Structure probing data (2A3 and DMS) for a 177-nucleotide construct. The RNA was probed in 150 mM KOAc, 10 mM MgCl2 and 150 mM bicine (pH 8.5) at 24 C. For 2A3, 5,106 sequencing reads were counted. Source: RMDB library TTRDES, as collected in RNAgym. For DMS, 3,009 sequencing reads were counted.
[RMDB]
RNA sequence: GGGAACGACUCGAGUAGAGUCGAAAAGAUAUGGAUCGGACAACGAGACGAACAUCGGAAACGAUGUUUCGUCGAUGAGUUGAAUCCGAUCCUAAGUCAAAGCCAAGGUUCUUCGGAACCUUGGCAAGUUGUAUUCAAGCUUCGGCUUGAAUACAACAAAAGAAACAACAACAACAAC
Reactivity to 2A3 in 0.01 (KOAc 150mM, MgCl2 10mM, bicine 150mM(pH8.5), 24C), signal-to-noise 2, nucleotides 027 to 126: g000a000u000a010u070g000g010a000u000c000g000g040a000c000a000a000c010g190a040g010a150c000g000a000a000c010a010u020c030g000g030a030a000a000c010g010a010u030g030u060u150u070c030g000u000c000g000a020u030g000a030g010u000u010g080a170a140u010c000c000g000a000u000c000c000u000a000a000g000u000c050a120a130a070g000c000c010a000a000g030g020u010u020c000u090u100c280g130g000a000a030c010c000u000u000g010g010c000a000a000
Reactivity to DMS in 0.01 (KOAc 150mM, MgCl2 10mM, bicine 150mM(pH8.5), 24C), signal-to-noise 2, nucleotides 027 to 126: g010a000u000a050u020g000g000a000u000c000g010g000a070c000a000a010c000g000a040g010a000c000g010a010a020c010a020u000c000g000g000a000a000a040c000g000a000u000g000u000u000u000c000g030u000c000g000a100u000g000a090g010u010u000g000a220a200u010c000c010g000a020u010c000c000u000a000a090g000u000c010a130a130a220g000c000c000a000a010g020g000u000u010c010u000u020c260g020g010a010a020c010c000u000u000g000g020c010a000a020